[RMDB]
RNA sequence: GGGAACGACUCGAGUAGAGUCGAAAAUAAAAUCGAAGGGCGAGACGAUCGACGUAAAUCGCUCAAACUACUCGAGACCAAAGGAAUACGCUUCGGUAACUCGCUCUAAUCCCGAGCGAUAAAUGAAGAUAACUUGAUAGUUCGCUAUCAAGUUAUCAAAAGAAACAACAACAACAAC
Reactivity to 2A3 in 0.01 (KOAc 150mM, MgCl2 10mM, bicine 150mM(pH8.5), 24C), signal-to-noise 7, nucleotides 027 to 126: u030a000a020a000a040u040c020g020a050a080g000g020g020c010g010a020g020a060c030g050a090u180c100g120a120c020g060u040a040a080a110u040c010g000c000u000c030a010a040a020c020u020a010c010u010c020g010a010g020a060c030c040a080a070a030g110g030a150a080u100a120c040g010c110u050u060c020g010g010u030a050a050c020u000c020g000c010u000c020u020a010a030u030c000c000c000g000a010g000c010g030a030u090a080a130a060u150g040a090a050
Reactivity to DMS in 0.01 (KOAc 150mM, MgCl2 10mM, bicine 150mM(pH8.5), 24C), signal-to-noise 5, nucleotides 027 to 126: u010a060a070a140a110u010c020g010a100a140g010g020g000c010g010a020g010a070c060g010a230u000c150g010a100c030g010u000a030a090a090u000c010g020c030u000c030a070a080a150c040u000a020c040u000c020g010a020g000a140c060c070a040a060a070g010g010a100a110u000a070c100g000c060u000u000c050g000g000u000a060a100c110u000c010g000c010u000c010u010a080a130u010c060c030c030g010a050g020c020g010a050u000a040a060a080u020g010a140a100
Chemical mapping of a 177-nucleotide RNA with 2A3 and DMS. For 2A3, 13,321 sequencing reads were counted. Values cover nucleotides 27 to 126. For DMS the reverse transcriptase was MarathonRT.